RNA sequence: GGGAACGACUCGAGUAGAGUCGAAAAGCAGCCUUGUCUCAACUUACUUUACAGCUUCAACACAACUUUCAAGCCAUUUCUAGUUCUAUUGAUGAUAUUUAUUCUCGACUGGACAGUCUUUCAGCUGAUGUUCAGGUUGACCGUCUCAUCACCGGCACACUUCAAUGACUUUCGAGUCAUUGAAGUGAAAAGAAACAACAACAACAAC
Reactivity to 2A3 in 0.01 (KOAc 150mM, MgCl2 10mM, bicine 150mM(pH8.5), 24C), signal-to-noise 9, nucleotides 027 to 156: g060c050a010g010c010c010u060u060g050u020c030u010c020a050a120c040u080u120a040c020u130u170u100a070c050a040g040c020u080u090c050a100a080c030a030c020a180a110c050u060u160u150c090a090a050g020c030c010a100u070u100u040c060u090a050g040u050u030c030u060a120u120u120g030a030u020g020a030u040a100u160u150u050a130u150u050c060u030c060g080a060c010u010g010g010a020c020a060g110u020c020u040u190u110c070a080g050c030u050g010a030u040g020u020u040c010a010g020g020u020u030g070a140c000c020g010u000c000u000c010a060u020c010a010c030c010g000g010c020a010
Reactivity to DMS in 0.01 (KOAc 150mM, MgCl2 10mM, bicine 150mM(pH8.5), 24C), signal-to-noise 2, nucleotides 027 to 156: g020c020a100g020c010c030u000u000g010u020c030u000c020a040a050c050u010u010a050c030u000u000u000a080c090a130g000c040u000u010c030a090a110c080a090c070a030a090c020u000u000u000c030a050a090g000c010c030a100u000u000u000c010u000a080g010u000u000c030u000a100u000u000g010a060u000g010a110u000a090u000u000u010a080u020u000c040u000c000g000a050c020u000g010g010a060c030a060g020u000c050u000u000u000c080a070g010c060u010g040a130u000g030u000u000c020a040g010g010u010u010g020a070c020c050g040u000c030u000c120a120u000c040a110c100c020g000g010c040a300

Source: RMDB library OK3TST, as collected in RNAgym. The record gives the reactivity of an RNA of 207 nucleotides to 2A3 and DMS. The DMS profile rests on 6,396 reads. The RNA was probed in 150 mM KOAc, 10 mM MgCl2 and 150 mM bicine (pH 8.5) at 24 C. The 2A3 profile rests on 7,974 reads. Values cover nucleotides 27 to 156.